The record gives the reactivity of an RNA of 177 nucleotides to DMS and 2A3. The DMS profile rests on 2,702 reads. The RNA was probed in 150 mM KOAc, 10 mM MgCl2 and 150 mM bicine (pH 8.5) at 24 C. 2A3 adducts were read by reverse transcription with SuperScript II with manganese. The 2A3 profile rests on 7,969 reads. Source: RMDB library TTRDES, as collected in RNAgym.
RNA sequence: GGGAACGACUCGAGUAGAGUCGAAAAGAUAUGGAUGUACUGCCGCGAGCGAAGAACUACCUCGGAAACGAGGUAGGGAGCUCCGGUUACAUCCUAAGUCAAAGUUGUAAGGUUCGCCUUACAACAAGCCUCCUUAUUAGUUCGCUAAUAAGGAGGCAAAAGAAACAACAACAACAAC
Reactivity to DMS in 0.01 (KOAc 150mM, MgCl2 10mM, bicine 150mM(pH8.5), 24C), signal-to-noise 2, nucleotides 027 to 126: g000a050u000a300u010g000g000a010u000g000u000a000c300u020g020c010c020g020c210g000a000g040c010g010a090a090g000a200a110c000u000a000c000c010u000c010g020g000a070a140a180c000g020a000g000g020u000a000g000g000g010a100g020c000u000c000c020g010g010u010u000a010c010a000u010c010c000u000a030a040g010u000c030a100a150a140g010u000u000g000u010a000a000g010g000u000u010c300g010c000c000u000u000a010c000a030a000c020a060a110
Reactivity to 2A3 in 0.01 (KOAc 150mM, MgCl2 10mM, bicine 150mM(pH8.5), 24C), signal-to-noise 4, nucleotides 027 to 126: g030a020u080a050u150g000g000a010u000g020u040a070c180u200g090c030c030g160c300g020a010g000c050g220a300a040g000a060a050c010u010a010c010c000u000c010g010g020a070a080a050c020g020a000g000g000u010a010g000g000g000a020g000c010u000c020c000g000g020u010u000a000c000a000u000c000c000u010a110a020g050u030c050a110a070a100g010u000u000g010u010a010a020g040g020u030u150c300g130c090c000u020u000a000c000a000a000c000a000a010